Chemical mapping of a 170-nucleotide RNA with 2A3 and DMS. The data come from the RNA Mapping Database (RMDB), library 15KLIB. DMS adducts were read by reverse transcription with MarathonRT. Reactivities are given for positions 27 through 129. The RNA was probed in 150 mM KOAc, 10 mM MgCl2 and 150 mM bicine (pH 8.5) at 24 C.
[RMDB]
RNA sequence: GGGAACGACUCGAGUAGAGUCGAAAACCUGAAGGAGGAAGGAGCUCUCGAGCGCUCUCCCGCCCCUCGGAUGGGCCGCUUCCGGCGAACGAGCCCGAAGAGCGAGUGGGGGAGAACUCCCGAGAGUGAACUAGGUCGUUCGCGACCUAGAAAAGAAACAACAACAACAAC
Reactivity to 2A3 in 0.01 (KOAc 150mM, MgCl2 10mM, bicine 150mM(pH8.5), 24C), signal-to-noise 4, nucleotides 027 to 129: c010c020u050g040a030a020g020g010a000g010g010a030a010g010g030a040g000c000u000c010u000c020g000a000g010c040g010c010u000c000u000c010c020c000g040c000c010c010c010u000c010g050g060a100u150g050g000g000c000c000g020c010u080u050c050c070g100g010c020g040a020a030c020g010a040g010c010c010c000g040a040a020g020a000g040c080g000a030g000u050g000g000g000g000g000a000g000a010a010c020u010c020c010c010g040a050g010a010g070u060g050a020a010
Reactivity to DMS in 0.01 (KOAc 150mM, MgCl2 10mM, bicine 150mM(pH8.5), 24C), signal-to-noise 7, nucleotides 027 to 129: c030c000u050g030a050a010g000g000a050g020g010a040a060g040g030a060g050c010u010c030u000c000g010a010g020c300g030c040u020c020u010c030c000c000g040c000c050c160c000u000c010g000g000a300u070g020g030g020c050c030g000c150u010u010c030c040g040g000c120g020a020a140c030g020a130g020c020c020c020g000a300a170g020a040g040c160g010a000g030u060g000g000g000g030g040a000g020a040a050c040u020c010c100c040g020a060g000a030g060u020g030a070a140